[RMDB]
RNA sequence: GGGAACGACUCGAGUAGAGUCGAAAAGUCUCACGAGUGCAGAGACAAAGGUAGUUGACUCCGGGGCUACCAGUACUCGAACGAAUGCGAAAGAGUUCAAGUAUUCCAACCGGAGAAGAACUCAAAAGCAUAUCAGCUAGUUCGCUAGCUGAUAUGCAAAAGAAACAACAACAACAAC
Reactivity to DMS in 0.01 (KOAc 150mM, MgCl2 10mM, bicine 150mM(pH8.5), 24C), signal-to-noise 1, nucleotides 027 to 126: g000u020c000u030c050a220c120g000a000g030u110g000c050a300g020a060g000a000c000a030a030a050g000g070u000a000g000u000u000g000a000c020u000c000c000g000g000g020g000c000u000a000c000c000a150g060u000a050c050u060c000g010a000a030c000g000a300a200u000g000c300g050a140a000a140g000a300g000u000u000c000a020a040g020u000a030u000u000c000c000a010a070c000c070g070g000a000g000a110a010g000a010a000c190u000c180a040a000a010a110
Reactivity to 2A3 in 0.01 (KOAc 150mM, MgCl2 10mM, bicine 150mM(pH8.5), 24C), signal-to-noise 4, nucleotides 027 to 126: g010u000c010u030c000a070c110g130a100g150u300g090c140a090g030a000g020a030c000a040a020a000g010g000u010a000g000u010u010g040a150c000u040c000c000g000g000g000g000c000u000a000c000c010a000g000u010a000c010u010c000g000a030a010c010g020a100a020u220g110c100g060a140a100a020g070a030g010u010u020c010a000a020g020u000a060u080u000c020c010a070a110c000c000g000g000a000g000a010a000g020a010a010c090u070c070a050a070a000a000